RNA sequence: GGGAACGACUCGAGUAGAGUCGAAAAGAUAUGGACAACUACCCACCCAGGUAGAGCGAAGAACUCGGAAACGAGGGAGCUUGUACUGGAGGUUGUCCUAAGUCGGCGCAGAUCUUCGGAUCUGCAAGCUACGGACUAUGUUCGCAUAGUCCGUAGCAAAAGAAACAACAACAACAAC
Reactivity to 2A3 in 0.01 (KOAc 150mM, MgCl2 10mM, bicine 150mM(pH8.5), 24C), signal-to-noise 3, nucleotides 027 to 126: g080a090u230a170u250g000g020a020c000a010a000c030u190a240c000c010c040a040c030c000c000a010g040g080u280a030g020a000g040c000g110a300a030g010a120a010c010u010c010g040g000a080a070a060c010g010a010g050g010g010a010g020c030u080u130g300u300a050c000u040g000g000a010g000g000u000u000g000u000c000c000u020a020a020g120u050c060g130g130c090g000c040a000g010a000u000c000u060u210c270g140g000a000u020c000u030g000c000a000a010
Reactivity to DMS in 0.01 (KOAc 150mM, MgCl2 10mM, bicine 150mM(pH8.5), 24C), signal-to-noise 2, nucleotides 027 to 126: g000a080u000a110u020g010g010a000c010a000a010c000u000a160c030c010c020a300c160c000c000a010g000g000u020a300g000a020g010c010g010a070a190g010a080a200c000u010c000g000g000a090a120a120c020g010a010g000g010g000a050g010c000u000u000g020u010a280c000u000g020g000a100g000g000u010u000g000u000c010c000u010a030a050g010u000c130g020g010c120g000c010a000g000a020u000c000u030u020c170g080g000a010u010c000u010g010c040a050a040

An RNA of 177 nucleotides, treated with 2A3 and DMS and read out base by base. DMS adducts were read by reverse transcription with MarathonRT. For 2A3 the reverse transcriptase was SuperScript II with manganese. The reactions ran in a buffer of 150 mM KOAc, 10 mM MgCl2 and 150 mM bicine (pH 8.5), at 24 C. Values cover nucleotides 27 to 126. For 2A3, 2,907 sequencing reads were counted.